[RMDB]
RNA sequence: GGGAACGACUCGAGUAGAGUCGAAAACAGCGUAUCUUCGGAUACGCUGGUCGAACCUUUGUGAAAUGGAGCGUAUAACAAUGUCGGCCCAUUGGGCACGACUAUAUACGCGUUGAAAUUUCACUCUGGUAAUUGCUAACGAGUUCGCUCGUUAGAAGGUCGUCAUGUAAUUCGUUACAUGACGACCAAAAGAAACAACAACAACAAC
Reactivity to 2A3 in 0.01 (KOAc 150mM, MgCl2 10mM, bicine 150mM(pH8.5), 24C), signal-to-noise 2, nucleotides 027 to 156: c000a000g000c010g000u000a000u010c040u060u090c230g090g000a000u010a000c010g010c000u000g000g000u010c060g040a030a030c000c000u030u000u040g000u000g010a000a030a000u010g030g020a050g000c000g040u010a000u020a030a200c120a300a180u200g000u010c000g000g020c000c020c130a300u140u300g000g000g000c180a230c300g010a000c000u000a000u000a000u000a010c000g000c010g000u020u050g000a000a030a000u000u000u000c000a000c000u000c000u000g000g000u050a110a140u260u210g060c000u000a000a010c000g000a000g000u060u140c170g110c140u000c000g020u060u050a000g000a040a040

Overview:
Source: RMDB library RNAMAK, as collected in RNAgym. Chemical mapping of a 207-nucleotide RNA with 2A3. Reactivities are given for positions 27 through 156. The 2A3 profile rests on 1,151 reads. The RNA was probed in 150 mM KOAc, 10 mM MgCl2 and 150 mM bicine (pH 8.5) at 24 C.